[RMDB]
Conditions: 150 mM KOAc, 10 mM MgCl2 and 150 mM bicine (pH 8.5), 24 C.
The record gives the reactivity of an RNA of 207 nucleotides to DMS and 2A3.
The data come from the RNA Mapping Database (RMDB), library OK3TST.

RNA sequence: GGGAACGACUCGAGUAGAGUCGAAAAUCAUUAAUCCUUGUCAGACUGUAUGGUGUCUUACUAUGUAUGUUCUCUGCUAGACUUCAGAAACAAUAAAAAGUUUGUUGUGAAAUUAGUCAAGAUUUAAAUUUAAAAAUCGCUAGGUUGUGAGGCGAGGAGCAAACUGAUUAUUCGUAAUCAGUUUGCUAAAAGAAACAACAACAACAAC
Reactivity to DMS in 0.01 (KOAc 150mM, MgCl2 10mM, bicine 150mM(pH8.5), 24C), signal-to-noise 1, nucleotides 027 to 156: u000c070a100u010u000a080a170u000c010c010u000u000g030u020c070a090g000a080c030u020g040u010a070u020g020g030u000g020u000c050u010u000a040c050u000a070u000g040u000a060u010g010u020u010c050u000c020u010g000c050u010a150g010a040c080u000u000c070a100g000a130a100a060c020a060a090u000a040a050a070a090a210g020u010u000u010g020u010u000g000u000g000a060a070a100u000u000a080g000u000c020a100a110g000a120u000u000u000a020a070a130u000u020u010a030a070a040a100a100u000c050g010c040u000a120g030g000u000u010g050u000g010a150g020g010c010g010a020g040g010
Reactivity to 2A3 in 0.01 (KOAc 150mM, MgCl2 10mM, bicine 150mM(pH8.5), 24C), signal-to-noise 2, nucleotides 027 to 156: u100c040a010u050u260a090a050u040c020c000u010u080g030u050c010a000g000a050c040u010g040u170a050u050g150g040u050g010u000c060u000u000a020c020u020a020u120g060u000a060u010g080u180u010c080u000c010u080g010c020u040a050g000a120c030u040u040c090a040g160a190a080a010c010a000a050u200a180a100a100a070a060g000u040u110u040g000u050u030g000u010g030a070a120a220u030u000a030g060u050c050a000a000g020a000u140u080u210a010a100a070u180u180u170a040a140a080a020a010u020c000g000c000u000a020g040g030u020u020g000u000g000a030g000g000c000g020a000g030g000